[RMDB]
Structure probing data (2A3) for a 207-nucleotide construct. Source: RMDB library OK3TST, as collected in RNAgym. The reactions ran in a buffer of 150 mM KOAc, 10 mM MgCl2 and 150 mM bicine (pH 8.5), at 24 C.
RNA sequence: GGGAACGACUCGAGUAGAGUCGAAAACGCCUAUGGAUUUUCAACAUGGCCACGUUCAUUGAGCAGGAAUAGUAAUGUGGCCCGUUAUCAUCAACUCUCCACAAAAGAUCGCUAUACCAUUGAUAUAUCCUGCAAUAAAACAUCUGUCACAUAUAUAUCAUGGACAGAACUUCGGUUCUGUCCAUGAAAAAGAAACAACAACAACAAC
Reactivity to 2A3 in 0.01 (KOAc 150mM, MgCl2 10mM, bicine 150mM(pH8.5), 24C), signal-to-noise 1, nucleotides 027 to 156: c040g050c000c000u040a100u060g060g000a080u060u110u140u210c110a090a110c040a230u260g000g000c000c000a000c000g000u000u000c150a060u130u070g000a050g070c000a030g000g040a070a070u070a020g090u090a040a000u070g000u000g000g000c000c000c000g030u060u100a140u080c120a000u010c000a100a130c020u100c000u050c060c010a040c010a050a160a000a000g080a020u070c070g010c080u130a080u020a090c050c010a060u000u090g060a010u030a000u000a010u160c000c020u000g020c000a000a050u180a060a040a000a000c000a040u080c100u190g090u180c070a000c010a030u240a010u230a050u300a010